The data come from the RNA Mapping Database (RMDB), library OK3TST. Chemical mapping of a 207-nucleotide RNA with DMS and 2A3. As a SHAPE reagent, 2A3 marks flexible, mostly unpaired nucleotides at the ribose 2'-OH. 2A3 adducts were read by reverse transcription with SuperScript II with manganese. Values cover nucleotides 27 to 156. The DMS profile rests on 1,742 reads. For 2A3, 1,504 sequencing reads were counted.

RNA sequence: GGGAACGACUCGAGUAGAGUCGAAAAGACUCAGUAUGUCAGAUGAUGAGUUGGACACUCCUCAUAUUACUAAACGACAAGCAUCAGUUAGAAGAGAUGAUCACAGUGUCUAGGUUUGUCCAUAUGGAAGGCUUUGUAACUUUUCCUGCAUGGCCUAGAGGACUCCAAAAUUCGUUUUGGAGUCCUCAAAAGAAACAACAACAACAAC
Reactivity to DMS in 0.01 (KOAc 150mM, MgCl2 10mM, bicine 150mM(pH8.5), 24C), signal-to-noise 1, nucleotides 027 to 156: g010a040c030u040c010a130g000u000a060u010g020u010c060a210g030a140u000g040a040u000g020a130g000u000u010g000g010a070c100a170c030u010c060c070u000c070a060u000a120u030u000a230c060u010a060a100a110c050g000a040c060a090a190g010c030a130u000c010a100g020u000u000a060g000a080a140g000a130g000a080u000g000a130u000c020a180c070a110g030u000g010u000c030u000a100g010g020u000u000u000g010u000c070c060a040u010a140u000g000g020a100a010g000g030c000u000u010u010g020u000a010a060c020u000u010u010u010c070c010u000g000c050a060u000g030g020c020c020u000a150
Reactivity to 2A3 in 0.01 (KOAc 150mM, MgCl2 10mM, bicine 150mM(pH8.5), 24C), signal-to-noise 3, nucleotides 027 to 156: g010a010c020u000c060a050g040u160a140u140g070u060c070a040g030a200u100g000a010u020g010a020g050u050u020g020g000a000c000a020c010u010c040c000u050c070a050u080a090u250u210a120c150u140a100a150a040c070g070a020c010a060a050g000c010a030u020c010a030g100u080u150a060g060a180a030g050a060g010a060u050g010a020u120c020a020c020a140g070u040g000u050c030u040a030g010g010u040u050u050g030u000c010c010a050u040a110u140g090g020a050a020g000g000c000u020u050u030g040u040a080a100c050u070u110u060u040c000c010u000g050c020a030u100g000g050c010c020u050a040